[RMDB]
This 177-nucleotide RNA was probed chemically with DMS and 2A3. DMS (dimethyl sulfate) methylates the pairing face of unpaired adenines and cytosines. Conditions: 150 mM KOAc, 10 mM MgCl2 and 150 mM bicine (pH 8.5), 24 C. For DMS, 30,592 sequencing reads were counted.
RNA sequence: GGGAACGACUCGAGUAGAGUCGAAAAGCGAUGAUUCGUCAUCGCGCACGCCAAUGAUGAGACCGGCACUAACUGAGUUGUGAUGAGCACUCGGUUGGCUGAGACUGCUUCAAGGGUUCGCCCUUGAUAUUCUAAUUACUUUCGAGUAAUUAGAAUAAAAAGAAACAACAACAACAAC
Reactivity to DMS in 0.01 (KOAc 150mM, MgCl2 10mM, bicine 150mM(pH8.5), 24C), signal-to-noise 9, nucleotides 027 to 126: g010c010g010a010u000g000a020u000u010c200g020u000c000a010u000c000g020c010g000c150a070c220g010c010c020a100a090u010g000a080u000g000a070g010a140c040c020g010g000c030a090c070u010a010a010c010u000g000a020g010u010u010g010u000g000a130u010g000a300g000c010a020c000u000c000g000g010u000u000g000g000c020u000g000a110g010a120c050u000g010c100u010u000c000a010a040g000g000g010u000u010c210g010c010c000c000u000u000g000a070
Reactivity to 2A3 in 0.01 (KOAc 150mM, MgCl2 10mM, bicine 150mM(pH8.5), 24C), signal-to-noise 6, nucleotides 027 to 126: g000c010g000a000u010g010a010u020u110c190g050u010c090a000u000c000g000c000g000c020a040c080g080c000c010a070a120u180g060a070u080g020a030g040a070c000c030g020g010c030a040c160u110a020a000c010u010g020a000g150u300u040g020u120g030a080u110g020a010g010c010a000c000u000c000g000g000u010u010g000g000c010u010g020a030g030a100c050u080g030c010u120u020c010a010a010g040g000g040u040u080c300g100c000c000c000u000u010g010a000